[RMDB]
RNA sequence: GGGAACGACUCGAGUAGAGUCGAAAACUCUGAGAGAUAUUACUCGUGCACGCUGAUGAUGAGCCAAGGUUGUAAUGACUCCUCUCACGGUAAGUCAGCCAGACUUUCUUCCGCGACGGGAUGUCGCCUGUUGAGUUGUGUUCGCACAACUCAACAGAAAAGAAACAACAACAACAAC
Reactivity to 2A3 in 0.01 (KOAc 150mM, MgCl2 10mM, bicine 150mM(pH8.5), 24C), signal-to-noise 3, nucleotides 027 to 126: c010u010c030u080g070a050g000a000g030a080u030a090u180u130a090c000u010c010g000u030g070c040a030c060g030c060u050g000a070u030g010a040u030g040a070g030c030c030a060a040g120g010u040u070g060u100a080a050u140g030a050c000u000c000c000u000c000u000c010a040c000g010g030u060a050a030g010u030c040a030g050c070c010a050g010a130c000u010u060u060c010u100u000c040c030g010c000g050a030c020g020g100g000a060u130g010u000c000g000c030
Reactivity to DMS in 0.01 (KOAc 150mM, MgCl2 10mM, bicine 150mM(pH8.5), 24C), signal-to-noise 2, nucleotides 027 to 126: c080u000c000u000g000a110g000a190g000a160u010a040u050u130a090c030u000c040g020u010g030c050a030c030g000c090u050g000a160u050g010a080u010g000a050g000c020c000a050a140g000g000u000u000g080u020a060a040u100g020a030c030u000c050c030u000c210u050c020a050c090g000g000u000a050a050g000u000c100a110g030c110c050a130g020a080c060u020u000u000c110u000u030c030c010g000c000g020a020c180g050g080g000a040u020g040u000c010g000c120
Source information
An RNA of 177 nucleotides, treated with 2A3 and DMS and read out base by base. As a SHAPE reagent, 2A3 marks flexible, mostly unpaired nucleotides at the ribose 2'-OH. The reactions ran in a buffer of 150 mM KOAc, 10 mM MgCl2 and 150 mM bicine (pH 8.5), at 24 C. For 2A3, 2,127 sequencing reads were counted. It was measured as part of the RMDB library OK1LIB.